[RMDB]
RNA sequence: GGGAACGACUCGAGUAGAGUCGAAAAUGUCGGCAAGCUCUAUAUAUGGACACUUACGAAGGGUUUUGGUUGUUUUGUAUCUCAAGCCGACUUUGAGUAUUUGAGGCAAAUACGACAGAAAAAACAAAUAGACCGGUAUCCUUCGGGAUACCGGUAACUUAAAUUUGGGUUUCGACCCAAAUUUAAGAAAAGAAACAACAACAACAAC
Reactivity to DMS in 0.01 (KOAc 150mM, MgCl2 10mM, bicine 150mM(pH8.5), 24C), signal-to-noise 1, nucleotides 027 to 156: u000g030u000c030g020g000c010a130a150g020c050u000c010u010a110u030a160u000a060u000g010g020a060c030a030c030u010u030a070c090g010a120a080g000g030g020u010u000u010u000g020g010u000u010g000u000u000u020u030g010u010a110u000c020u000c010a060a270g010c010c000g000a010c050u000u000u000g010a250g010u000a060u000u000u010g010a110g000g010c010a050a020a110u000a050c030g000a170c040a080g000a010a000a080a130a050a130c060a040a070a090u000a090g000a110c000c010g010g000u010a000u000c000c000u000u000c300g030g010g000a030u010a020c000c000g020g010u000a000a010